[RMDB]
RNA sequence: GGGAACGACUCGAGUAGAGUCGAAAAUCAGAAUCAGGCCGGAGUGUUUAGCGCUCCGUAAACACGGUCGUACAUCCAGCCGGUAGCCUGGUUCCUUGCAUUGAGUUAUGUACGGAGUUUAUAGAGCAAAAGAAAGACCUGUUCGCAGGUCUUUCAAGAGUUUUAACAUGUUCGCAUGUUAAAACUCAAAAGAAACAACAACAACAAC
Reactivity to DMS in 0.01 (KOAc 150mM, MgCl2 10mM, bicine 150mM(pH8.5), 24C), signal-to-noise 1, nucleotides 027 to 156: u000c030a070g020a070a010u000c020a020g010g030c040c000g020g010a060g040u000g000u010u040u010a270g040c070g020c000u010c020c020g050u000a020a050a120c040a110c000g020g000u010c110g020u000a100c100a100u000c050c020a100g020c000c020g000g020u000a050g040c010c000u000g000g020u000u000c000c020u000u000g020c090a110u000u010g010a220g020u000u020a030u020g010u010a120c030g030g000a220g000u000u000u000a110u010a110g020a100g000c030a080a050a130a210g010a020a000a000g000a010c010c000u000g030u000u000c300g040c010a010g020g020u000c000u010u010u000c010a030a090
Reactivity to 2A3 in 0.01 (KOAc 150mM, MgCl2 10mM, bicine 150mM(pH8.5), 24C), signal-to-noise 3, nucleotides 027 to 156: u050c000a000g030a000a000u000c010a000g000g000c010c010g000g000a010g000u040g060u070u200u280a120g150c020g000c010u020c020c010g010u010a000a010a000c120a020c060g000g080u110c010g020u050a020c010a180u000c030c010a020g000c000c000g010g030u010a020g000c000c000u020g010g010u000u020c010c000u040u050g040c000a080u020u110g060a050g100u200u130a100u130g030u050a040c080g040g000a020g000u050u150u010a090u030a010g100a000g060c080a070a010a100a080g010a010a000a000g000a010c000c000u020g020u040u050c160g010c050a000g010g000u000c000u010u000u010c000a010a000